Overview
Chemical mapping of a 177-nucleotide RNA with 2A3. The reactions ran in a buffer of 150 mM KOAc, 10 mM MgCl2 and 150 mM bicine (pH 8.5), at 24 C. The data come from the RNA Mapping Database (RMDB), library OK1LIB. For 2A3, 392 sequencing reads were counted.
[RMDB]
RNA sequence: GGGAACGACUCGAGUAGAGUCGAAAAUGGACAAAGUCACUGAGAAGCCAACUAACAUUGAUGACACUCUUUUAGCAACAUUGAUCUUGUCUAUUUACAGAGUAAAUAGUGCUCAAAACAAUGAUCAGGGUGCUUCAUGUUUCGACAUGAAGCACCCAAAAGAAACAACAACAACAAC
Reactivity to 2A3 in 0.01 (KOAc 150mM, MgCl2 10mM, bicine 150mM(pH8.5), 24C), signal-to-noise 1, nucleotides 027 to 126: u050g100g000a000c110a110a090a020g010u000c000a000c040u150g000a040g000a120a200g040c000c000a190a150c010u050a000a000c000a130u000u210g000a080u240g000a090c000a130c080u000c230u000u140u140u110a080g000c170a000a200c000a000u010u170g000a050u130c000u010u000g000u000c000u000a000u000u000u000a210c240a060g050a000g070u030a050a110a000u090a040g030u070g160c050u090c060a000a070a020a180c000a000a240u060g000a040u040c050a000